[RMDB]
RNA sequence: GGGAACGACUCGAGUAGAGUCGAAAACACUUUCCGACGGUGAGUUCGUCGACACCUCUGCCCCUCCCAGGUACUAUCCCUUUUCAAGGAUGUGUUCCCUAGGAGGGUGAGUGUACCUCUUUUCGGAUUUCUCCGGUCUUCCGAGAGAGACAGAGGACUUGUAUAAGUGCUUCGGCACUUAUACAAGAAAAGAAACAACAACAACAAC
Reactivity to 2A3 in 0.01 (KOAc 150mM, MgCl2 10mM, bicine 150mM(pH8.5), 24C), signal-to-noise 3, nucleotides 027 to 156: c010a000c000u090u140u100c110c020g000a010c020g040g050u230g190a220g080u220u150c010g000u000c000g020a030c020a080c060c000u000c000u010g000c010c000c000c000u010c000c000c010a010g010g000u010a000c000u010a000u010c030c000c000u000u230u110u280c040a010a010g000g000a000u000g010u010g000u150u090c010c020c000u000a020g000g000a000g000g020g000u030g000a000g000u030g010u030a030c010c000u010c000u020u050u070u060c010g010g010a010u010u050u010c100u030c060c190g230g000u000c000u000u020c010c000g000a000g000a000g000a000g010a020c000a000g000a000g000g010a030
Reactivity to DMS in 0.01 (KOAc 150mM, MgCl2 10mM, bicine 150mM(pH8.5), 24C), signal-to-noise 1, nucleotides 027 to 156: c050a100c140u000u000u000c080c000g000a090c100g010g010u010g000a120g050u000u000c070g030u000c030g000a150c000a090c000c010u000c010u000g020c060c000c000c010u000c010c010c030a130g050g000u000a060c020u000a050u000c000c000c000u000u000u000u030c270a100a060g000g010a030u000g020u010g020u000u000c210c010c020u000a000g020g000a020g000g000g000u000g000a080g020u010g020u000a180c060c010u000c000u010u000u000u000c010g040g000a090u000u000u000c030u010c110c110g030g010u000c030u000u000c050c000g040a080g000a110g020a060g000a060c000a010g000a030g000g040a220

Chemical mapping of a 207-nucleotide RNA with 2A3 and DMS. It was measured as part of the RMDB library VIROID. For DMS the reverse transcriptase was MarathonRT.